[RMDB]
RNA sequence: GGGAACGACUCGAGUAGAGUCGAAAAAUCACCGGUGGGGAACCCCAUACGGCAACGGCGUAGAAGUAAAUGCUAACCAAUCCGUGGUAUCUACGCGACGGAGCAUCGACGGAUAACUCUAACAAGGCUAAGCGUCUCGGUUUCGACCGAGACGCAAUCGGAUUACAUUCUUCGGAAUGUAAUCCGAAAAAGAAACAACAACAACAAC
Reactivity to 2A3 in 0.01 (KOAc 150mM, MgCl2 10mM, bicine 150mM(pH8.5), 24C), signal-to-noise 1, nucleotides 027 to 156: a000u020c050a020c000c000g040g030u000g010g000g040g120a250a280c000c000c000c000a090u170a230c040g020g000c030a060a090c000g000g010c040g000u010a000g000a140a000g030u130a070a190a070u240g010c090u110a060a110c040c070a050a050u000c000c000g040u020g000g040u010a030u030c000u000a000c000g000c000g060a040c030g080g040a040g000c010a070u050c050g020a020c000g000g000a030u030a120a130c020u110c060u260a050a130c020a210a050g050g000c050u190a070a070g010c000g000u000c000u000c000g000g020u040u070u000c070g090a030c000c000g000a000g090a000c000g000c000a000a000

An RNA of 207 nucleotides, treated with 2A3 and read out base by base. Conditions: 150 mM KOAc, 10 mM MgCl2 and 150 mM bicine (pH 8.5), 24 C. 2A3 adducts were read by reverse transcription with SuperScript II with manganese.